[RMDB]
RNA sequence: GGGAACGACUCGAGUAGAGUCGAAAAGAUAUGGAGACACCCACGGCAAGAACGUUGAAAUCGGAAACGAUGGAGUUCUUGAGAACGUGGUGUCUCCUAAGUCAAAAGCAUACCUUCGGGUAUGCAAGUGAACUAUACAGUUCGCUGUAUAGUUCACAAAAGAAACAACAACAACAAC
Reactivity to DMS in 0.01 (KOAc 150mM, MgCl2 10mM, bicine 150mM(pH8.5), 24C), signal-to-noise 7, nucleotides 027 to 126: g000a030u010a300u010g000g000a010g000a020c000a010c100c040c030a030c020g010g000c000a010a010g000a000a010c000g010u000u000g010a090a120a030u000c010g010g000a090a080a150c000g020a010u000g000g010a100g010u000u000c000u000u000g000a100g020a090a120c040g020u000g000g020u000g000u000c000u000c000c000u000a010a050g010u010c020a090a070a090a120g000c010a010u000a000c000c000u000u010c230g020g010g010u000a000u000g000c000a010a030
Reactivity to 2A3 in 0.01 (KOAc 150mM, MgCl2 10mM, bicine 150mM(pH8.5), 24C), signal-to-noise 5, nucleotides 027 to 126: g020a010u060a010u150g000g000a000g000a000c010a010c010c160c020a010c030g060g030c030a010a010g000a020a000c020g150u300u120g050a120a140a010u010c010g010g030a060a030a030c010g000a000u030g010g030a080g010u010u010c000u000u040g030a080g070a110a030c020g010u010g000g000u000g000u000c000u000c000c000u000a010a000g010u000c020a010a020a020a120g000c000a000u000a010c000c000u040u070c280g150g000g000u010a000u000g000c000a010a000